An RNA of 207 nucleotides, treated with 2A3 and read out base by base. 2A3 adducts were read by reverse transcription with SuperScript II with manganese. The RNA was probed in 150 mM KOAc, 10 mM MgCl2 and 150 mM bicine (pH 8.5) at 24 C. It was measured as part of the RMDB library OK3TST.
[RMDB]
RNA sequence: GGGAACGACUCGAGUAGAGUCGAAAAACAAGGUAUCAUUCUGGAUAAUAUGGAGGGUGAAGGACUCGACGAGUUUAAGGAAUAUAACCGUAAACAGUUAUUAACGCAGGGCGUCGUUAAACCGCGCAAUACAGAAGAAGAGCAGAUGGUUGCGCAGGACCAAACACACAUUCGUGUGUGUUUGGUCAAAAGAAACAACAACAACAAC
Reactivity to 2A3 in 0.01 (KOAc 150mM, MgCl2 10mM, bicine 150mM(pH8.5), 24C), signal-to-noise 2, nucleotides 027 to 156: a000c000a010a000g000g020u020a120u300c100a300u030u030c010u040g000g010a000u000a040a160u140a210u130g050g000a030g020g000g010u010g010a020a000g030g010a030c050u050c160g200a080c060g010a040g020u010u080u110a060a000g040g020a020a000u060a000u030a030a020c060c030g050u030a000a080a030c040a050g030u020u040a010u000u040a020a000c010g030c000a000g010g010g000c020g010u110c010g040u030u070a090a010a020c030c060g000c010g000c010a020a080u170a130c040a020g060a070a010g030a050a000g020a090g030c000a010g010a100u020g000g000u050u010g000c010g000c000a010g020